Conditions: 150 mM KOAc, 10 mM MgCl2 and 150 mM bicine (pH 8.5), 24 C. Structure probing data (DMS and 2A3) for a 177-nucleotide construct. 2A3 is a SHAPE reagent: it acylates the 2'-hydroxyl of flexible nucleotides of all four kinds. For 2A3, 43,486 sequencing reads were counted. The DMS profile rests on 18,810 reads. 2A3 adducts were read by reverse transcription with SuperScript II with manganese.

RNA sequence: GGGAACGACUCGAGUAGAGUCGAAAAGAUAUGGAGAAUGGCUUUUGACGCACGUUAUUCGGAAACGAAUGUCAGCGUGCGAUAAGCCACUCCUAAGUCAAAAGAUGACCACUUCGGUGGUCAUCAAGUACCCAUUAAUGUUCGCAUUAAUGGGUACAAAAGAAACAACAACAACAAC
Reactivity to DMS in 0.01 (KOAc 150mM, MgCl2 10mM, bicine 150mM(pH8.5), 24C), signal-to-noise 9, nucleotides 027 to 126: g010a030u000a300u010g000g000a020g010a110a120u000g010g000c000u000u000u000u000g020a220c060g000c000a010c010g020u000u000a040u000u000c000g000g000a100a080a160c000g010a010a010u000g010u010c300a080g000c020g010u000g010c000g010a050u000a020a010g010c000c000a040c010u000c000c000u000a030a130g000u000c030a070a070a110a130g000a010u000g000a010c000c000a010c000u000u020c190g030g020u000g000g000u000c000a000u000c000a010a080
Reactivity to 2A3 in 0.01 (KOAc 150mM, MgCl2 10mM, bicine 150mM(pH8.5), 24C), signal-to-noise 9, nucleotides 027 to 126: g030a020u080a030u140g020g050a020g060a290a300u090g010g000c030u100u110u130u200g210a130c040g000c000a000c000g040u090u090a020u030u020c020g010g030a060a050a030c020g010a020a010u100g220u300c140a040g010c010g000u000g000c010g000a000u010a000a000g000c000c000a000c000u000c000c000u010a170a020g050u030c040a000a020a050a220g000a000u010g000a000c000c000a000c020u050u090c300g140g000u000g000g000u000c000a000u000c000a000a000